Chemical mapping of a 177-nucleotide RNA with DMS.
Values cover nucleotides 27 to 126.
For DMS the reverse transcriptase was MarathonRT.
The DMS profile rests on 1,006 reads.
Reactivities are rounded to 0.1 and cut off at 0 and 3.
Conditions: 150 mM KOAc, 10 mM MgCl2 and 150 mM bicine (pH 8.5), 24 C.
[RMDB]
RNA sequence: GGGAACGACUCGAGUAGAGUCGAAAAGCACUGGCCCAUGAGGACUGCCCUGCCAUCGACCAGCCAGCCAUGUCUCCAGAAGACAAGAGCCCAAUCACUCCCGGAAGCCGGGGUCGCUACAGCCGGGUAUUAUCGAACCGUUCGCGGUUCGAUAAUAAAAAGAAACAACAACAACAAC
Reactivity to DMS in 0.01 (KOAc 150mM, MgCl2 10mM, bicine 150mM(pH8.5), 24C), signal-to-noise 1, nucleotides 027 to 126: g010c040a110c060u000g020g020c010c000c050a130u000g040a070g020g000a120c050u000g000c060c060c020u020g020c020c020a070u010c060g010a080c040c080a050g020c040c070a100g010c060c070a110u000g000u000c010u010c020c130a140g010a090a090g010a070c090a050a060g000a100g010c000c020c040a070a060u000c070a150c140u000c000c000c020g030g000a140a140g000c020c060g020g000g000g050u000c040g020c050u000a060c090a060g000c020c020g000g010g000